Chemical mapping of a 177-nucleotide RNA with DMS and 2A3. Conditions: 150 mM KOAc, 10 mM MgCl2 and 150 mM bicine (pH 8.5), 24 C. Reactivities are given for positions 27 through 126. As a SHAPE reagent, 2A3 marks flexible, mostly unpaired nucleotides at the ribose 2'-OH.

RNA sequence: GGGAACGACUCGAGUAGAGUCGAAAAAGCGCGAUACGUCGCGCAUGGAUAUGAUGACUGAUUACCUGAGAAAUAACUGAUGAAAUCUCAAGAAAAUUCCUCUAGAUAGUCAAGUUCUGAUCCAGAAUAUGACUGUUUAUUUCGAUAAACAGUCAUAAAAAGAAACAACAACAACAAC
Reactivity to DMS in 0.01 (KOAc 150mM, MgCl2 10mM, bicine 150mM(pH8.5), 24C), signal-to-noise 8, nucleotides 027 to 126: a090g000c000g010c010g000a030u010a080c180g010u000c000g010c010g010c000a030u010g000g010a050u000a130u020g010a070u010g000a070c020u000g000a020u000u000a010c050c020u000g010a020g000a020a020a020u010a060a300c060u000g000a080u020g010a100a100a150u030c220u000c050a050a070g010a050a080a090a060u000u010c030c000u000c010u030a030g000a020u000a010g000u000c000a020a070g010u010u010c010u000g010a050u000c000c000a050g000a070a130
Reactivity to 2A3 in 0.01 (KOAc 150mM, MgCl2 10mM, bicine 150mM(pH8.5), 24C), signal-to-noise 9, nucleotides 027 to 126: a000g020c020g000c000g000a010u040a060c230g110u010c000g010c000g000c000a010u020g010g000a020u060a070u200g100a020u060g020a020c010u000g010a010u000u020a010c000c010u010g010a010g040a010a040a020u110a080a050c040u040g030a030u050g040a090a070a120u140c100u010c050a060a070g040a040a110a010a020u030u020c020c000u000c020u040a010g000a050u010a000g020u020c060a110a030g020u100u030c020u040g040a020u000c010c000a010g050a080a040